The record gives the reactivity of an RNA of 207 nucleotides to 2A3. The data come from the RNA Mapping Database (RMDB), library OK3TST. The 2A3 profile rests on 723 reads. The reactions ran in a buffer of 150 mM KOAc, 10 mM MgCl2 and 150 mM bicine (pH 8.5), at 24 C. For 2A3 the reverse transcriptase was SuperScript II with manganese.
RNA sequence: GGGAACGACUCGAGUAGAGUCGAAAACAUGUCAAGGCUGAUGAUUGUGCUGGUCGUGUUGUUAUCGCUGGCGGUGGCCGGUCUGUUUCUGGUGAAACACAAAAAUGCCAGCCUGCGCGCCUCGCUGGACAGGGCGAACAACGUCGCCAGCGGUCAGCGAAAAACAGGGUUUCGACCCUGUUUUUCGAAAAGAAACAACAACAACAAC
Reactivity to 2A3 in 0.01 (KOAc 150mM, MgCl2 10mM, bicine 150mM(pH8.5), 24C), signal-to-noise 1, nucleotides 027 to 156: c040a010u150g040u120c040a020a040g060g000c000u040g040a080u030g000a040u070u090g090u050g010c030u010g020g020u060c000g050u030g000u100u000g040u000u040a090u100c000g000c010u000g000g000c030g020g010u000g040g000c050c020g010g140u020c050u030g010u070u190u000c020u040g000g000u100g080a070a140a000c090a010c080a020a080a300a000a010u280g060c000c000a000g000c000c000u020g020c020g000c000g030c000c020u050c030g010c000u050g000g010a020c030a090g010g020g190c000g040a030a000c060a030a040c030g050u070c030g000c000c000a010g000c000g000g010u010c010a000g000